[RMDB]
RNA sequence: GGGAACGACUCGAGUAGAGUCGAAAAGUUAUGGAAAACGUCUUAGCUACCACUACAACAACAAUGCUGGACGGAGAUGGUUCGACUUACUCGAAACCAUCACGUAGUGGUAGUCGUUCCCAUUCAAGCACUUGAGUAAAUUCGUUUACUCAAGUGCAAAAGAAACAACAACAACAAC
Reactivity to DMS in 0.01 (KOAc 150mM, MgCl2 10mM, bicine 150mM(pH8.5), 24C), signal-to-noise 2, nucleotides 027 to 126: g020u000u000a140u010g010g000a080a070a120a100c010g010u010c010u000u020a060g060c010u000a060c030c030a070c040u020a050c140a130a070c160a070a110c160a050a150u000g000c090u000g010g030a070c060g000g010a110g010a080u000g010g000u000u000c000g000a020c100u000u020a070c090u010c000g000a020a080a060c040c020a010u000c060a080c120g010u010a030g000u000g000g000u000a120g010u000c010g000u000u000c010c000c000a140u000u000c150a060a140
Reactivity to 2A3 in 0.01 (KOAc 150mM, MgCl2 10mM, bicine 150mM(pH8.5), 24C), signal-to-noise 5, nucleotides 027 to 126: g030u070u050a090u300g140g000a070a100a000a000c030g030u020c040u130u250a040g000c010u040a050c020c080a060c080u180a020c020a150a000c010a030a020c010a130a160u180g030c040u030g020g020a040c020g090g000a080g000a060u140g050g020u020u010c010g000a010c030u040u060a030c010u030c000g020a090a040a020c010c010a020u050c020a020c100g120u150a040g010u010g000g000u000a000g000u000c000g020u000u000c000c000c000a000u040u100c030a030a010